[RMDB]
Chemical mapping of a 177-nucleotide RNA with 2A3 and DMS.

RNA sequence: GGGAACGACUCGAGUAGAGUCGAAAAGAUAUGGAGACCCAUCGUAGCGAGGAUCUAUUGUCGGAAACGACAAUAGGGAGCUAAUGGUGUCUCCUAAGUCAAACCUCCUUUGUUCGCAAAGGAGGAAGACUCACUUCACCUUCGGGUGAAGUGAGUCAAAAGAAACAACAACAACAAC
Reactivity to 2A3 in 0.01 (KOAc 150mM, MgCl2 10mM, bicine 150mM(pH8.5), 24C), signal-to-noise 1, nucleotides 027 to 126: g010a000u000a010u040g000g010a010g010a010c000c070c040a020u120c260g240u110a000g020c020g040a300g060g010a010u020c000u000a020u010u020g000u000c000g010g000a000a000a000c000g000a000c000a010a010u000a000g000g000g000a010g000c010u080a080a000u050g010g010u190g000u090c000u030c000c010u000a010a000g010u000c010a010a030a290c020c010u040c000c000u000u050u030g100u110u130c300g040c220a000a000a000g000g000a010g020g010a040a010
Reactivity to DMS in 0.01 (KOAc 150mM, MgCl2 10mM, bicine 150mM(pH8.5), 24C), signal-to-noise 1, nucleotides 027 to 126: g010a040u000a010u010g000g000a000g000a010c000c010c020a010u010c300g060u010a000g020c000g010a040g010g000a010u010c010u000a010u000u020g010u000c010g040g000a000a000a010c000g010a020c000a000a010u010a000g000g010g010a030g020c010u040a090a040u000g000g000u010g000u000c000u000c000c000u000a000a090g000u000c000a100a130a220c000c000u000c000c000u000u000u010g010u000u050c300g010c020a010a000a010g010g000a020g000g000a010a010